An RNA of 177 nucleotides, treated with DMS and read out base by base. The DMS profile rests on 780 reads. DMS adducts were read by reverse transcription with MarathonRT.
[RMDB]
RNA sequence: GGGAACGACUCGAGUAGAGUCGAAAAGUUAAGCUUAGCUGGUUUAACAACUACUCUAGCUAUCGUUGUUUGACCGACUUUAACUGAAAAAACAAACCAGUCAGUUAGUGACUUUACCUUAAGCAACAUUUUCCGCUGAAUUCGUUCAGCGGAAAAUAAAAGAAACAACAACAACAAC
Reactivity to DMS in 0.01 (KOAc 150mM, MgCl2 10mM, bicine 150mM(pH8.5), 24C), signal-to-noise 1, nucleotides 027 to 126: g010u000u000a040a080g040c090u000u000a070g040c040u000g010g040u000u000u010a040a060c050a020a040c000u010a090c120u040c030u010a070g020c080u000a070u010c090g000u010u000g020u000u010u040g010a040c110c000g010a020c020u000u000u000a020a010c010u000g000a020a080a070a110a060a020c180a070a090a030c090c080a020g000u000c060a010g000u000u000a010g040u030g010a030c030u010u000u010a110c060c040u000u000a050a110g020c110a030a030c160